[RMDB]
The data come from the RNA Mapping Database (RMDB), library OK1LIB. Chemical mapping of a 177-nucleotide RNA with 2A3 and DMS. The RNA was probed in 150 mM KOAc, 10 mM MgCl2 and 150 mM bicine (pH 8.5) at 24 C. For DMS the reverse transcriptase was MarathonRT. High 2A3 reactivity points to a flexible backbone, as in loops and unpaired stretches. For DMS, 70,260 sequencing reads were counted.
RNA sequence: GGGAACGACUCGAGUAGAGUCGAAAAGAUGACUUCCAGGACUGUUAUGCAACACUAUGCGAGAUAAUAUAACAUUGUCUCAAGGGAAGUGAAGCAUGGUGUUGCACUUCCCUUUGUCAAUGGAAGAGAUAGUUGUCGAGUUCGCUCGAUAGCUAUCAAAAGAAACAACAACAACAAC
Reactivity to 2A3 in 0.01 (KOAc 150mM, MgCl2 10mM, bicine 150mM(pH8.5), 24C), signal-to-noise 9, nucleotides 027 to 126: g110a060u200g040a050c000u000u000c000c000a000g020g030a010c030u060g080u260u180a050u070g000c010a010a000c000a010c020u010a010u020g010c030g010a010g000a010u020a020a030u060a010u050a150a090c110a050u020u020g010u000c000u000c020a050a070g150g030g040a120a110g140u170g140a080a010g010c010a010u030g000g010u030g010u010u010g000c000a000c000u010u000c000c000c000u030u080u120g080u030c050a060a080u020g000g010a000a000g020a010
Reactivity to DMS in 0.01 (KOAc 150mM, MgCl2 10mM, bicine 150mM(pH8.5), 24C), signal-to-noise 9, nucleotides 027 to 126: g010a100u030g000a110c010u000u000c000c010a030g010g010a230c040u000g000u020u030a250u010g010c010a010a020c020a020c030u000a010u000g010c020g000a020g000a010u000a020a020u010a120u030a120a120c240a040u000u000g010u000c010u000c010a140a110g010g010g010a070a080g010u020g020a100a150g010c000a020u000g010g020u000g000u000u000g000c010a000c030u000u000c000c000c010u010u020u020g010u010c060a110a090u000g000g000a020a010g000a220